Structure probing data (DMS) for a 177-nucleotide construct. The data come from the RNA Mapping Database (RMDB), library M2PK90. Values cover nucleotides 27 to 126.

RNA sequence: GGGAACGACUCGAGUAGAGUCGAAAAGCUGAGUAUACGAGGUUAGUUCAUUCUCGUAUGCAUGAUUGGACAAAUUAAAAUCUCAAUUUGGAUCAGGGCCUCGCUCCAGCGACGGCCGAACAUACAACUUCUGGUACAGAUUCGUCUGUACCAGAAGAAAAGAAACAACAACAACAAC
Reactivity to DMS in 0.01 (KOAc 150mM, MgCl2 10mM, bicine 150mM(pH8.5), 24C), signal-to-noise 3, nucleotides 027 to 126: g010c050u000g010a100g010u000a020u000a000c010g000a030g000g010u000u020a120g000u010u010c150a080u010u000c000u000c010g020u000a010u000g010c050a100u000g010a080u010u000g010g010a110c040a040a020a050u000u010a050a090a090a100u020c110u000c070a040a030u000u000u000g010g000a130u000c080a070g010g000g040c010c010u000c020g030c010u000c170c150a180g000c000g010a020c170g020g000c000c010g000a010a020c080a070u010a130c200a050a090